Chemical mapping of a 177-nucleotide RNA with DMS and 2A3. The DMS profile rests on 1,821 reads. DMS adducts were read by reverse transcription with MarathonRT. For 2A3, 1,407 sequencing reads were counted.

[RMDB]
RNA sequence: GGGAACGACUCGAGUAGAGUCGAAAAUUGUACACCUUCGGGUGUACAAGCUGUCUAGUCGCUAGCAAACGAUCAAAGCUAGCGACUAGUCUUUAUUGAUCGCGACGUGCGCUUUCGAGCGCACGAAUCUGGGAAUAGUGUUCGCACUAUUCCCAGAAAAAGAAACAACAACAACAAC
Reactivity to DMS in 0.01 (KOAc 150mM, MgCl2 10mM, bicine 150mM(pH8.5), 24C), signal-to-noise 2, nucleotides 027 to 126: u000u010g000u010a000c000a010c000c010u000u020c190g020g030g030u000g000u000a000c010a000a010g000c170u000g010u000c010u010a020g010u000c000g020c000u000a000g030c010a060a130a060c110g000a050u000c070a080a150a100g020c000u010a010g010c010g000a010c000u000a000g020u010c020u000u010u010a060u010u000g000a030u010c030g010c280g000a170c020g000u010g010c000g000c010u000u000u010c140g030a010g030c010g020c000a000c010g000a030a030
Reactivity to 2A3 in 0.01 (KOAc 150mM, MgCl2 10mM, bicine 150mM(pH8.5), 24C), signal-to-noise 1, nucleotides 027 to 126: u030u020g000u010a000c000a000c010c010u070u060c290g140g000g000u000g000u000a000c000a000a000g020c010u010g010u030c000u000a010g020u010c020g000c020u010a000g000c030a070a080a080c080g050a120u120c080a110a070a020g010c000u000a000g030c010g000a000c010u000a000g000u010c000u010u050u000a140u090u080g090a030u100c070g000c020g150a120c020g000u030g020c000g000c000u100u020u060c200g070a000g000c020g000c000a000c010g000a000a000